[RMDB]
RNA sequence: GGGAACGACUCGAGUAGAGUCGAAAAGAGAGUCUGUGUUGUACACUGAUUGCUAACCAGUGUACAACAUAGUACUAGAUGUGACAGCUACGACACCUGUCACGUGAGACUGCUCGUUAUGCAUUGGUUAGCAAACAAUGCGUAACAACAUGUUGCAAGUCCAACUUCCAUGCGACAGAGAGUAGUCUCCGGAGUUGCGUGUUGUAAGCAGUUUCGAUAGUACUAUGCUAGUACCUGGAAGUUGGACUUGUACUAGCACAGACUCUAGAGGUCAGUUCGCUGACUUCAAAAGAAACAACAACAACAAC
Reactivity to 2A3 in 0.01 (KOAc 150mM, MgCl2 10mM, bicine 150mM(pH8.5), 24C), signal-to-noise 9, nucleotides 027 to 266: g160a000g000a000g000u010c000u000g000u000g010u000u010g000u010a000c000a000c000u020g020a080u100u200g080c090u110a040a040c020c000a000g010u010g000u030a000c000a000a000c000a000u000a000g000u000a000c000u010a010g090a120u170g030u040g030a010c020a020g010c030u110a040c100g110a010c030a010c030c010u030g030u060c030a030c160g030u110g000a010g000a000c010u010g010c000u020c030g010u000u010a010u040g000c000a000u000u010g040g040u120u150a080g100c080a070a100a010c010a000a020u020g010c010g020u030a000a010c020a030a010c030a060u150g030u040u030g030c010a030a010g010u030c010c000a010a000c000u020u020c050c060a080u100g050c060g020a010c010a030g110a000g000a000g060u020a000g000u010c000u000c000c000g020g010a020g050u080u050g040c070g040u110g070u110u140g100u100a090a050g000c010a020g010u010u020u030c020g020a010u020a010g000u010a000c000u000a000u010g020c000u010a010g010u030a050c030c020u020g020g010a010a010g010u010u010g000g000a000c000u020u020g000u000a000c000u000a000g000c000a000c000a000g000a000c000u000c000u010a010
Reactivity to DMS in 0.01 (KOAc 150mM, MgCl2 10mM, bicine 150mM(pH8.5), 24C), signal-to-noise 9, nucleotides 027 to 266: g010a050g000a020g010u000c000u000g020u000g010u000u000g010u000a010c010a020c120u000g000a090u000u000g000c090u010a060a080c130c000a010g010u000g010u000a010c020a030a030c010a010u000a010g010u000a000c010u000a030g000a090u000g010u000g000a010c010a030g010c090u010a090c130g010a080c130a080c300c010u000g000u000c010a030c010g010u000g010a050g010a020c010u000g010c030u000c060g010u000u000a060u000g000c000a010u000u000g000g000u000u010a070g010c140a080a100a080c020a030a030u000g010c040g020u000a020a020c030a130a110c170a090u010g010u000u000g010c020a060a040g010u000c000c000a010a020c010u000u000c010c020a070u000g010c080g010a050c080a060g000a130g010a050g020u000a010g000u000c010u000c040c010g000g000a040g000u010u000g010c050g010u010g010u010u010g010u010a080a140g010c010a040g010u000u000u000c010g000a130u000a010g000u010a010c010u000a010u000g010c020u000a080g010u000a040c040c160u000g000g000a010a010g000u000u000g000g000a040c030u000u000g000u000a010c010u010a020g000c030a030c020a000g000a020c000u000c010u000a070